An RNA of 177 nucleotides, treated with DMS and 2A3 and read out base by base. 2A3 is a SHAPE reagent: it acylates the 2'-hydroxyl of flexible nucleotides of all four kinds. The 2A3 profile rests on 11,835 reads. Conditions: 150 mM KOAc, 10 mM MgCl2 and 150 mM bicine (pH 8.5), 24 C. Values cover nucleotides 27 to 126. The data come from the RNA Mapping Database (RMDB), library M2PK50.
RNA sequence: GGGAACGACUCGAGUAGAGUCGAAAAUUCAAGCGAUUCGUCGCUUGAACCUGAGGAGACUCAAGCAAAAUUGUUCCCUUUUGCUUUUGCUUUCCACUUUUAAGUAGUAGUGCUUCGGCACUACUAAGUGAAAUAUACCAUUCGUGGUAUAUUUCACAAAAGAAACAACAACAACAAC
Reactivity to DMS in 0.01 (KOAc 150mM, MgCl2 10mM, bicine 150mM(pH8.5), 24C), signal-to-noise 6, nucleotides 027 to 126: u010u000c000a000a000g010c010g010a030u000u010c210g020u000c000g020c000u000u000g000a000a060c030c020u000g010a130g010g000a030g010a020c000u000c040a010a010g000c010a010a020a010a020u010u020g010u000u000c000c000c000u000u000u000u000g000c010u000u000u010u000g010c150u000u000u000c010c010a240c150u000u010u000u010a080a190g010u000a000g010u000a000g010u000g010c000u000u010c190g030g000c000a000c000u000a000c000u000a010a060
Reactivity to 2A3 in 0.01 (KOAc 150mM, MgCl2 10mM, bicine 150mM(pH8.5), 24C), signal-to-noise 5, nucleotides 027 to 126: u020u010c000a010a000g000c000g010a010u030u100c210g050u010c000g110c000u000u000g000a010a000c000c010u060g070a130g030g010a010g000a010c010u000c010a000a000g000c000a010a020a070a100u240u300g000u020u040c000c000c000u000u000u000u000g000c000u010u010u010u010g000c020u010u020u010c030c010a070c080u160u190u070u170a190a110g050u040a020g000u000a000g000u030g010c000u030u080c300g100g000c010a000c000u000a000c000u000a000a000